Record summary
The record gives the reactivity of an RNA of 177 nucleotides to DMS and 2A3. The RNA was probed in 150 mM KOAc, 10 mM MgCl2 and 150 mM bicine (pH 8.5) at 24 C. For 2A3 the reverse transcriptase was SuperScript II with manganese. High DMS reactivity at an A or C suggests that its Watson-Crick edge is free. The DMS profile rests on 2,798 reads. For 2A3, 1,694 sequencing reads were counted. 2A3 is a SHAPE reagent: it acylates the 2'-hydroxyl of flexible nucleotides of all four kinds.

RNA sequence: GGGAACGACUCGAGUAGAGUCGAAAAUCGAUAGUAUUUUUCAUAGCUUUCAGAUUACUCUUGAGCUCGUGAAACAACCAAGAAUGAAUUGAAAGUAUCGUCACUUUAUCUUUUAGGUUUGGCGUUAGCCAACUGGAGAGUUCGCUCUCCAGUUGGCAAAAGAAACAACAACAACAAC
Reactivity to DMS in 0.01 (KOAc 150mM, MgCl2 10mM, bicine 150mM(pH8.5), 24C), signal-to-noise 3, nucleotides 027 to 126: u010c040g010a140u000a110g010u010a040u000u000u010u000u010c030a100u010a150g010c010u000u000u010c060a050g010a070u000u000a040c100u000c000u000u010g010a130g020c080u000c090g030u000g020a160a120a150c300a020a030c030c010a020a030g020a030a020u010g010a010a060u010u000g000a020a010a040g010u000a070u010c080g010u000c040a020c170u000u010u000a050u010c070u000u000u000u020a050g000g010u000u000u000g020g000c050g020u010u010a080
Reactivity to 2A3 in 0.01 (KOAc 150mM, MgCl2 10mM, bicine 150mM(pH8.5), 24C), signal-to-noise 3, nucleotides 027 to 126: u060c010g020a030u080a100g110u110a200u080u120u020u090u140c040a040u090a140g010c000u060u010u020c020a030g020a100u050u060a080c010u000c000u040u010g050a050g050c020u010c060g100u110g100a150a020a000c020a010a020c020c000a000a020g030a050a060u090g020a030a080u060u040g010a050a010a000g030u030a070u120c010g050u020c060a020c050u120u200u100a130u160c070u090u170u030u140a050g050g010u040u100u120g000g010c020g050u050u050a030